The record gives the reactivity of an RNA of 177 nucleotides to DMS and 2A3.
RNA sequence: GGGAACGACUCGAGUAGAGUCGAAAAAGUAAGAGGACGCGCAAGGAAGUCUUAGUGUCCAAGGAUUUCGUGUUUACAGUGCUUAACCACAUUCGAACAUACCAGGCGAAAGCUCUUACAUACGCAAAUCCUGUACUUGAUUCGUCAAGUACAGGAUAAAAGAAACAACAACAACAAC
Reactivity to DMS in 0.01 (KOAc 150mM, MgCl2 10mM, bicine 150mM(pH8.5), 24C), signal-to-noise 6, nucleotides 027 to 126: a050g000u000a030a030g010a080g020g000a190c110g000c030g000c090a120a080g010g000a060a090g000u010c030u010u010a140g010u010g020u010c060c030a060a090g000g000a020u000u010u000c060g020u020g000u000u000u000a150c210a050g020u010g000c040u010u010a120a080c220c090a070c070a070u010u000c080g010a030a020c030a050u010a080c110c120a100g000g000c010g000a050a070a150g000c010u000c010u010u000a010c030a060u050a080c180g000c160a050a050
Reactivity to 2A3 in 0.01 (KOAc 150mM, MgCl2 10mM, bicine 150mM(pH8.5), 24C), signal-to-noise 9, nucleotides 027 to 126: a010g030u040a020a000g010a020g060g030a060c030g000c010g010c090a050a080g070g040a050a030g030u020c010u040u080a090g030u100g060u120c050c030a010a030g020g000a010u030u040u080c050g000u030g040u050u060u040a060c050a040g010u030g030c030u150u120a060a050c040c000a030c000a080u080u110c090g030a020a000c000a020u070a090c020c060a030g100g000c020g040a080a050a040g040c000u000c000u020u010a010c020a060u100a040c080g020c080a100a140
Source information: Conditions: 150 mM KOAc, 10 mM MgCl2 and 150 mM bicine (pH 8.5), 24 C. Source: RMDB library OK1LIB, as collected in RNAgym. The DMS profile rests on 10,855 reads.